Record summary: This 207-nucleotide RNA was probed chemically with DMS and 2A3. The reactions ran in a buffer of 150 mM KOAc, 10 mM MgCl2 and 150 mM bicine (pH 8.5), at 24 C. Values are in units of 0.01, from 0 to 300, in steps of 10.
RNA sequence: GGGAACGACUCGAGUAGAGUCGAAAACUGGGGACACUUAUGUUAGAGGUGGCGGUGCAGUGGAUGUACGUAGCCACGGCUCGCAUUCUCAGUGAGCACCCGAAUAUCAAAGCGUACCGUAGCGUACGUAGUACAGUAUUCGCGUCCGGUGUUCCACACAUGAUCUCGAUUUCGAUCGAGAUCAUGUAAAAGAAACAACAACAACAAC
Reactivity to DMS in 0.01 (KOAc 150mM, MgCl2 10mM, bicine 150mM(pH8.5), 24C), signal-to-noise 2, nucleotides 027 to 156: c050u000g030g020g040g000a120c080a060c050u010u000a060u000g030u000u000a090g000a080g040g050u000g000g020c000g120g000u000g000c000a060g000u020g000g000a200u000g030u000a050c120g030u000a170g040c000c010a020c020g020g030c000u000c030g010c010a180u010u010c040u000c040a300g010u010g010a070g010c020a090c000c020c020g000a030a020u000a030u020c040a060a160a300g000c020g000u000a020c040c010g000u000a120g010c140g040u000a010c020g000u000a010g010u010a080c180a050g010u000a040u010u000c040g030c070g010u010c050c070g020g000u000g020u000u000c000c000a120c300
Reactivity to 2A3 in 0.01 (KOAc 150mM, MgCl2 10mM, bicine 150mM(pH8.5), 24C), signal-to-noise 4, nucleotides 027 to 156: c040u050g020g010g000g040a020c020a010c070u220u100a100u220g090u130u090a080g020a040g100g020u020g020g030c000g020g030u050g010c030a010g040u130g130g140a080u030g040u080a060c100g080u110a030g010c000c010a000c000g030g000c000u000c000g000c000a030u150u050c060u010c010a050g020u060g070a030g010c010a030c000c000c010g000a000a000u040a050u160c060a070a010a010g020c000g000u000a000c030c020g260u300a040g040c110g130u000a000c040g010u010a000g060u060a050c080a040g010u000a010u000u010c000g010c050g110u020c050c030g000g000u000g000u000u000c010c000a030c010